[RMDB]
RNA sequence: GGGAACGACUCGAGUAGAGUCGAAAAGUUGUUGUUGAAGAGUGAGAGCAACAACAACAAAAAGAAAAGAAGAAGGAAAGAAAGAAAAGAAAGAAAAGAAAGGAACACAUUCACUCAAGGAAGAAAAGUUUUUUUUUUUGUUCGCAAAAAGAAAAACAAAAGAAACAACAACAACAAC
Reactivity to DMS in 0.01 (KOAc 150mM, MgCl2 10mM, bicine 150mM(pH8.5), 24C), signal-to-noise 5, nucleotides 027 to 126: g010u000u000g010u000u010g010u000u000g000a100a110g010a060g050u000g000a050g000a110g010c040a010a010c020a010a030c010a040a030c030a050a070a060a090a050g010a080a040a090a070g020a050a050g010a060a040g010g000a050a050a050g000a070a060a080g000a060a040a080a070g010a050a040a080g000a060a050a070a080g000a050a040a030g020g040a030a050c100a070c090a110u020u010c020a040c030u010c040a100a100g000g000a070a080g010a060a060a090a080
Reactivity to 2A3 in 0.01 (KOAc 150mM, MgCl2 10mM, bicine 150mM(pH8.5), 24C), signal-to-noise 5, nucleotides 027 to 126: g000u010u010g000u000u000g010u010u000g040a150a080g030a020g060u090g020a070g010a000g080c010a000a030c000a000a000c000a000a000c030a020a100a010a000a000g090a020a050a010a000g070a040a000g030a020a010g070g020a080a020a020g030a050a080a000g030a020a100a010a000g080a000a060a000g050a020a100a000a000g050a030a040a000g050g010a050a000c030a000c000a090u080u040c000a020c020u030c020a010a040g080g030a030a070g050a040a100a040a090